Structure probing data (DMS and 2A3) for a 177-nucleotide construct.
[RMDB]
RNA sequence: GGGAACGACUCGAGUAGAGUCGAAAAGGGUUGUUGUUCGCAACAACCCAAAGAAGCUCAUGAUGACCCAAACAACGGCGUCGCCGUGAGCAAACGGCGAAAAAACACGACCCUUCGGGGUCGUGAACCCUAAAAGUUUGUUCGCAAACUUUUAGGGAAAAGAAACAACAACAACAAC
Reactivity to DMS in 0.01 (KOAc 150mM, MgCl2 10mM, bicine 150mM(pH8.5), 24C), signal-to-noise 2, nucleotides 027 to 126: g010g000g010u000u010g010u000u000g010u010u010c170g020c000a020a010c010a010a010c000c000c000a000a020a200g010a100a240g010c000u020c020a030u000g000a030u000g010a080c040c010c010a120a160a110c180a150a140c120g010g000c200g000u010c020g000c030c010g000u000g030a050g030c080a020a060a030c090g000g020c040g000a000a090a020a080a090a200c020a000c010g000a030c000c000c000u000u000c210g070g030g010g000u000c010g000u000g000a020a130
Reactivity to 2A3 in 0.01 (KOAc 150mM, MgCl2 10mM, bicine 150mM(pH8.5), 24C), signal-to-noise 1, nucleotides 027 to 126: g010g000g010u020u000g010u000u000g010u020u000c000g050c010a000a000c000a000a010c000c000c000a000a000a000g000a050a010g030c020u010c060a030u060g040a040u050g040a030c010c010c050a040a220a170c110a090a030c090g040g020c140g050u000c010g000c000c010g010u040g010a040g010c020a000a070a040c030g070g000c050g090a100a040a010a000a010a020c020a010c050g000a000c030c010c050u000u060c210g090g000g010g000u050c000g000u000g000a000a000
DMS adducts were read by reverse transcription with MarathonRT. Values are in units of 0.01, from 0 to 300, in steps of 10. For 2A3 the reverse transcriptase was SuperScript II with manganese. For 2A3, 1,541 sequencing reads were counted.